[RMDB]
RNA sequence: GGGAACGACUCGAGUAGAGUCGAAAAACGGAGGGGGGUGACUAGGAAUCAGGAUCCAGUGGAUCCGUGGGAAUUAUCCCGUUCCACCCCCGCGGCACACUCCUUCCCCCCUGCGGGCCCCCCCAUAAUGCACAGACCUUCGGGUCUGUGAAAAGAAACAACAACAACAAC
Reactivity to DMS in 0.01 (KOAc 150mM, MgCl2 10mM, bicine 150mM(pH8.5), 24C), signal-to-noise 2, nucleotides 027 to 129: a000c110g010g000a010g000g020g010g020g000g040u000g000a050c130u010a150g050g050a040a130u040c000a120g050g000a030u020c020c000a040g050u100g020g040a000u000c000c030g010u030g020g010g000a050a080u030u080a060u050c000c000c000g070u010u040c020c020a170c000c000c000c000c000g000c110g000g070c220a050c040a160c030u000c000c000u000u000c010c020c000c010c040c000u020g020c040g010g000g080c000c000c000c000c000c000c000a110u080a070a070u030g050
Reactivity to 2A3 in 0.01 (KOAc 150mM, MgCl2 10mM, bicine 150mM(pH8.5), 24C), signal-to-noise 1, nucleotides 027 to 129: a000c100g010g020a040g000g000g000g000g000g000u040g010a080c090u110a060g020g080a020a080u060c050a040g020g000a000u000c020c020a070g120u130g170g010a000u020c000c020g050u070g070g020g000a150a000u160u090a110u200c000c000c020g050u020u020c030c050a080c020c020c030c000c000g040c000g000g000c030a000c040a030c050u000c000c010u010u010c030c000c000c000c000c000u040g080c000g000g070g030c000c030c000c000c000c000c000a020u110a080a050u130g040